Structure probing data (DMS and 2A3) for a 177-nucleotide construct.
The 2A3 profile rests on 1,183 reads.
For 2A3 the reverse transcriptase was SuperScript II with manganese.

[RMDB]
RNA sequence: GGGAACGACUCGAGUAGAGUCGAAAAAAGGGACGAUUGAAGUGAGCUAUCAAGGUCUCAAAGCAGUAUCACCUUUUGCGACCCAAGCUGAAAGCCAAACUUGCAUGACGACACUACAUUUGCAGAAAUGCACCCAAUGUUUCGACAUUGGGUGCAUAAAAGAAACAACAACAACAAC
Reactivity to DMS in 0.01 (KOAc 150mM, MgCl2 10mM, bicine 150mM(pH8.5), 24C), signal-to-noise 2, nucleotides 027 to 126: a040a040g030g010g000a090c300g010a060u000u000g000a040a110g000u010g000a020g030c040u020a160u000c210a160a100g000g000u010c000u020c010a050a060a060g000c050a050g010u000a040u000c110a240c040c000u010u000u000u010g000c120g020a100c000c000c050a050a100g000c080u000g000a060a050a110g000c030c030a050a030a070c150u000u000g040c060a040u000g030a050c050g010a070c090a050c030u000a020c100a050u000u000u000g000c090a040g010a040a060
Reactivity to 2A3 in 0.01 (KOAc 150mM, MgCl2 10mM, bicine 150mM(pH8.5), 24C), signal-to-noise 2, nucleotides 027 to 126: a000a000g100g020g070a050c070g070a100u040u020g020a040a000g130u070g080a030g000c050u020a060u300c070a090a080g070g060u090c010u010c090a040a020a000g060c040a010g040u050a010u120c050a130c000c000u010u040u030u040g010c000g040a050c010c000c010a010a020g000c040u080g050a180a020a040g000c000c000a040a110a000c080u040u080g000c040a030u040g030a080c040g040a010c010a000c090u110a030c020a070u020u060u140g070c010a010g050a060a080